An RNA of 177 nucleotides, treated with DMS and 2A3 and read out base by base. 2A3 adducts were read by reverse transcription with SuperScript II with manganese. For DMS, 3,573 sequencing reads were counted. It was measured as part of the RMDB library OK1LIB.

RNA sequence: GGGAACGACUCGAGUAGAGUCGAAAAGCGAUGGACUACGGUCCAUCGCAAUAAAAUCAGCGGUAAAUAAUUAGCUCCCGUUACCGCUGAACGGGAGCAUAAAGCCGCGUAGUACGCUACGCGGCAACUAUCAUCCAGGGUUCGCCCUGGAUGAUAGAAAAGAAACAACAACAACAAC
Reactivity to DMS in 0.01 (KOAc 150mM, MgCl2 10mM, bicine 150mM(pH8.5), 24C), signal-to-noise 2, nucleotides 027 to 126: g030c010g000a010u000g030g000a010c000u060a100c300g010g000u000c000c010a020u000c000g050c000a020a010u030a060a030a170a060u010c000a000g000c000g000g040u050a060a040a050u010a010a040u030u040a080g010c010u020c000c000c000g010u020u000a080c000c010g000c020u000g000a000a000c000g000g010g010a000g020c030a080u030a030a160a070g010c020c030g020c000g000u000a020g050u010a140c210g000c010u010a010c000g000c000g000g000c020a010a010
Reactivity to 2A3 in 0.01 (KOAc 150mM, MgCl2 10mM, bicine 150mM(pH8.5), 24C), signal-to-noise 7, nucleotides 027 to 126: g000c000g000a000u000g000g010a000c020u050a050c290g070g000u000c000c000a000u000c010g010c000a010a000u040a010a020a000a050u030c000a000g010c010g130g220u220a090a090a060u090a030a100u160u150a060g000c000u010c000c000c000g000u000u030a180c010c000g000c000u000g000a000a000c000g000g000g000a010g010c010a000u150a020a120a000g000c000c000g000c000g000u000a000g000u020a020c260g020c090u000a000c010g000c000g000g000c000a000a000